[RMDB]
RNA sequence: GGGAACGACUCGAGUAGAGUCGAAAACUUCCGACCUGUGAGGUCGAGGAUUCCCCGUGGAGGGAGACAGCCACCGGGAUAGGACAGAGAAAUCACCUCCAGAGGACCCCUUCAGCGAACAUGAAGCCAGGAUAGCCCUUCGGGGCUAUCAAAAGAAACAACAACAACAAC
Reactivity to 2A3 in 0.01 (KOAc 150mM, MgCl2 10mM, bicine 150mM(pH8.5), 24C), signal-to-noise 5, nucleotides 027 to 129: c020u060u030c040c010g040a040c010c000u060g110u170g210a090g020g020u020c050g000a030g010g000a040u040u080c020c000c000c000g030u040g050g010a040g020g040g010a110g030a050c030a020g040c010c000a010c000c040g010g020g020a050u090a110g040g020a050c100a050g100a020g050a060a060a040u050c020a060c010c010u020c020c000a000g010a050g030g020a030c000c000c000c000u020u030c040a040g050c000g040a010a010c020a020u120g060a050a010g040c020c030a020g070
Reactivity to DMS in 0.01 (KOAc 150mM, MgCl2 10mM, bicine 150mM(pH8.5), 24C), signal-to-noise 3, nucleotides 027 to 129: c070u020u080c100c000g060a040c050c000u040g030u080g060a100g050g030u020c040g000a060g010g010a140u010u010c010c020c010c140g050u030g020g010a050g020g010g010a100g110a070c000a080g000c000c060a060c040c100g000g000g000a040u040a030g020g010a100c160a080g030a110g000a100a080a090u030c050a100c040c020u040c000c060a100g010a100g000g000a140c080c000c040c030u020u030c050a070g000c040g000a050a070c060a090u060g040a000a000g020c050c060a100g050